[RMDB]
RNA sequence: GGGAACGACUCGAGUAGAGUCGAAAAGCCACUCCCGUGUUGUACUCUUCUGUCAGCUUCGACAGCCUUUUGAUCUCCAGUUCCAGGGGUCCAGCUUCUUCCCCCUGGAGGGGAGUUAAUAAAAGUGAAGCAUGAGCCUUGGGCUCCACGGGCGUGACCAGUCAUAAAUGUUCGCAUUUAUGACUGGAAAAGAAACAACAACAACAAC
Reactivity to DMS in 0.01 (KOAc 150mM, MgCl2 10mM, bicine 150mM(pH8.5), 24C), signal-to-noise 1, nucleotides 027 to 156: g030c000c010a060c000u000c010c000c000g030u030g000u010u000g020u000a060c050u000c060u000u000c040u000g000u000c020a160g020c150u010u000c040g040a080c040a120g010c050c010u020u000u010u010g030a160u000c000u010c010c010a100g000u020u010c030c010a060g020g000g000g030u000c080c050a130g020c060u010u000c010u000u000c060c000c000c010c010u000g020g050a030g020g010g030g000a030g010u000u000a050a140u000a070a050a070a080g030u000g010a080a060g000c040a110u000g010a060g000c020c010u000u010g020g020g010c020u000c030c030a000c000g020g010g000c070g030u000g000a150
Reactivity to 2A3 in 0.01 (KOAc 150mM, MgCl2 10mM, bicine 150mM(pH8.5), 24C), signal-to-noise 3, nucleotides 027 to 156: g050c000c000a000c000u010c020c000c000g000u030g000u070u150g040u100a110c070u080c010u250u020c010u050g070u050c020a010g050c130u140u190c120g060a070c010a050g040c000c000u070u070u000u030g120a100u060c000u000c000c020a210g030u090u000c000c000a000g000g000g000g010u040c110c040a080g020c040u190u030c010u160u180c080c000c000c000c000u000g010g000a010g030g050g020g000a000g000u020u060a140a040u070a060a070a010a000g020u040g030a010a010g040c060a150u050g020a010g000c020c060u110u130g050g050g010c010u000c000c000a000c000g000g000g010c020g000u000g000a020
Background: Structure probing data (DMS and 2A3) for a 207-nucleotide construct. Conditions: 150 mM KOAc, 10 mM MgCl2 and 150 mM bicine (pH 8.5), 24 C. DMS adducts were read by reverse transcription with MarathonRT. Values cover nucleotides 27 to 156. For DMS, 3,765 sequencing reads were counted. For 2A3 the reverse transcriptase was SuperScript II with manganese. Source: RMDB library OK3TST, as collected in RNAgym.